[RMDB]
RNA sequence: GGGAACGACUCGAGUAGAGUCGAAAAUGUCGUGAACGGCUGUCCAGCCGGGUCGCGACACAAGACAGAACACCGUGUCACGGGAACAACGUGACACUUCAGGGCGUUAAAGUCGGGUUCGCCCGACGAUACAUCAUCGGUUCGCCGAUGAUGUAUCAAAAGAAACAACAACAACAAC
Reactivity to DMS in 0.01 (KOAc 150mM, MgCl2 10mM, bicine 150mM(pH8.5), 24C), signal-to-noise 6, nucleotides 027 to 126: u000g010u010c010g040u000g000a030a030c010g000g000c000u000g010u010c300c170a060g010c000c000g000g000g030u000c000g020c010g020a020c010a020c160a070a100g010a100c120a090g000a100a030c050a050c050c060g000u000g010u000c000a000c000g020g010g010a140a110c300a070a070c010g010u000g000a010c000a000c010u000u000c140a140g010g010g010c050g010u010u000a070a060a140g010u000c000g010g000g010u000u010c210g010c000c000c010g010a010c060
Reactivity to 2A3 in 0.01 (KOAc 150mM, MgCl2 10mM, bicine 150mM(pH8.5), 24C), signal-to-noise 4, nucleotides 027 to 126: u050g000u000c000g000u010g010a010a000c010g000g010c020u040g180u150c110c110a000g000c000c010g040g050g040u030c010g000c000g010a000c010a000c000a010a020g070a020c020a030g150a120a010c030a010c040c030g000u010g000u000c000a010c000g030g010g100a200a070c060a060a010c100g010u000g000a000c000a000c000u020u020c010a040g010g040g000c080g030u040u120a160a110a030g010u010c010g020g000g000u030u080c160g020c060c000c010g000a010c030